[RMDB]
RNA sequence: GGGAACGACUCGAGUAGAGUCGAAAAAUCAAAGGCAGACUAUAUGUUCUUGUUCGUUGCCUUGUUCACAGAGAAAAACAUGUUCAUCUCCUAGCUGCCUUUUGCGUGGGGGGCAUUGCGCUCAUCAGUAGGAUAAACUGUUCGCAGUUUAUCCUACAAAAGAAACAACAACAACAAC
Reactivity to 2A3 in 0.01 (KOAc 150mM, MgCl2 10mM, bicine 150mM(pH8.5), 24C), signal-to-noise 3, nucleotides 027 to 126: a000u080c020a040a000a000g010g030c010a010g090a140c030u030a020u010a050u300g090u070u020c030u090u100g030u060u050c100g080u070u070g020c010c000u060u060g020u090u090c080a070c020a020g090a020g070a090a080a000a030a040c030a040u090g010u040u060c020a070u010c070u000c040c020u000a040g000c010u020g020c010c050u020u100u080u090g070c080g000u090g000g070g000g000g000g000c040a010u040u190g000c070g000c010u020c010a180u020c020a050
Reactivity to DMS in 0.01 (KOAc 150mM, MgCl2 10mM, bicine 150mM(pH8.5), 24C), signal-to-noise 5, nucleotides 027 to 126: a070u010c080a030a030a020g010g020c000a050g010a120c060u000a040u010a060u000g000u000u000c050u000u000g020u000u000c100g010u000u000g000c050c050u000u000g020u000u020c120a070c120a090g000a120g010a060a060a060a050a050c060a040u000g000u000u000c040a060u000c120u000c070c050u000a070g010c020u010g010c020c010u000u000u000u000g030c130g030u000g000g000g010g000g000g000c040a070u000u000g010c150g010c040u000c060a060u000c130a130
The data come from the RNA Mapping Database (RMDB), library OK2TST. The record gives the reactivity of an RNA of 177 nucleotides to 2A3 and DMS. High 2A3 reactivity points to a flexible backbone, as in loops and unpaired stretches.